[RMDB]
RNA sequence: GGGAACGACUCGAGUAGAGUCGAAAAGGAAGGCUGUCCCUAGUACGAGAGGACCGGGACGGACGAACCUCUGGUGUGCCAGUUGUUCCGCCAGGAGCACUGCUGGUUAGCUACGUUCGGAAGGGAUCCAACCUUUAACCUUCGGGUUAAAGGUUGGAAAAGAAACAACAACAACAAC
Reactivity to 2A3 in 0.01 (KOAc 150mM, MgCl2 10mM, bicine 150mM(pH8.5), 24C), signal-to-noise 3, nucleotides 027 to 126: g110g040a070a020g090g000c050u020g010u020c000c000c000u020a020g010u000a010c020g010a000g010a050g070g020a020c000c000g000g000g000a000c010g010g010a000c000g010a000a000c000c010u000c000u000g010g010u040g030u070g050c000c000a030g010u030u010g010u000u010c000c030g080c110c130a130g010g000a010g000c010a020c040u050g000c000u000g010g000u040u200a010g000c000u010a010c110g000u000u000c010g010g030a060a070g070g000g030a020u000
Reactivity to DMS in 0.01 (KOAc 150mM, MgCl2 10mM, bicine 150mM(pH8.5), 24C), signal-to-noise 1, nucleotides 027 to 126: g000g000a040a090g000g000c000u010g000u000c000c000c000u000a060g000u040a100c060g020a250g030a180g030g000a070c300c120g000g020g000a060c000g020g010a150c000g010a000a020c000c000u000c010u000g000g000u010g000u040g000c000c000a000g060u010u030g000u000u000c010c000g000c090c220a120g000g000a040g040c000a040c300u000g010c000u010g000g020u000u020a300g000c030u000a010c110g010u000u000c000g030g000a200a170g000g000g000a150u020